[RMDB]
RNA sequence: GGGAACGACUCGAGUAGAGUCGAAAACGAGAGUCUCUCACAGGUGGUCCUGUGUGCUUCCUACUGGACAGCCUCAGAAGGCAUGUGGCUCACAUCCCACUAUGAUGACGCAAAGAUCUUCCUCUGAGUUAGACGGUGGCAGCCUCAUCUCCUCAUCGUCCUGCUAUACCUUCGGGUAUAGCAGGACAAAAGAAACAACAACAACAAC
Reactivity to 2A3 in 0.01 (KOAc 150mM, MgCl2 10mM, bicine 150mM(pH8.5), 24C), signal-to-noise 2, nucleotides 027 to 156: c090g010a030g000a020g160u020c020u020c010u030c060a050c030a030g060g050u080g020g080u180c010c030u020g000u010g010u040g040c020u030u030c000c010u060a150c070u060g000g020a020c000a060g000c000c000u040c000a050g060a180a030g070g000c070a050u120g060u050g060g000c010u070c030a030c020a050u130c070c050c000a020c000u060a040u230g030a040u010g000a010c050g000c110a070a010a060g080a140u060c000u080u080c040c020u020c030u010g060a090g010u070u130a050g060a080c050g000g040u000g010g030c020a040g070c000c000u080c050a060u040c020u020c010c010u080c040a070u160c070